[RMDB]
RNA sequence: GGGAACGACUCGAGUAGAGUCGAAAAUACCGUCGUCUCCCCGACGGUUUCAAUCCAUAGCUUCACGUUGUGUAGCGUAGGUGGAAGGUAUCGUGUGGUGUAUAAACACCACAUAGUCUCUUAGGGGUCAAGCUGAUAAACUUCGGUUUAUCAGCAAUCGAAAGUAGGGUUUCGACCCUACUUUCGAAAAAGAAACAACAACAACAAC
Reactivity to 2A3 in 0.01 (KOAc 150mM, MgCl2 10mM, bicine 150mM(pH8.5), 24C), signal-to-noise 2, nucleotides 027 to 156: u080a010c000c010g000u000c010g010u000c050u050c020c010c000c000g010a000c000g020g030u000u000u050c030a030a040u000c010c010a040u050a070g010c010u040u070c020a040c070g300u280u230g000u100g030u030a020g020c040g030u060a140g060g110u060g010g010a000a040g060g020u070a050u140c080g010u010g000u000g000g000u000g050u030a110u080a210a250a030c010a000c010c000a000c000a000u010a000g010u000c000u000c010u160u160a050g000g060g000g000u090c070a050a050g010c000u000g000a000u000a000a000a010c010u030u030c130g070g010u010u000u000a010u000c000a000g010c000a000a000
Reactivity to DMS in 0.01 (KOAc 150mM, MgCl2 10mM, bicine 150mM(pH8.5), 24C), signal-to-noise 1, nucleotides 027 to 156: u000a020c010c010g000u010c000g030u000c000u010c060c000c030c030g000a000c010g050g000u000u000u000c020a060a130u000c010c050a180u000a170g000c040u000u050c020a010c060g010u020u000g020u000g010u010a050g050c020g030u000a090g010g040u000g010g010a050a120g020g000u000a030u000c030g050u000g030u010g030g060u020g120u000a200u000a180a090a180c030a000c010c000a000c000a010u000a060g010u000c010u000c010u000u010a100g030g010g060g000u000c090a090a170g030c010u010g010a010u000a030a000a010c010u000u000c300g050g000u000u000u000a010u050c000a010g030c000a050a020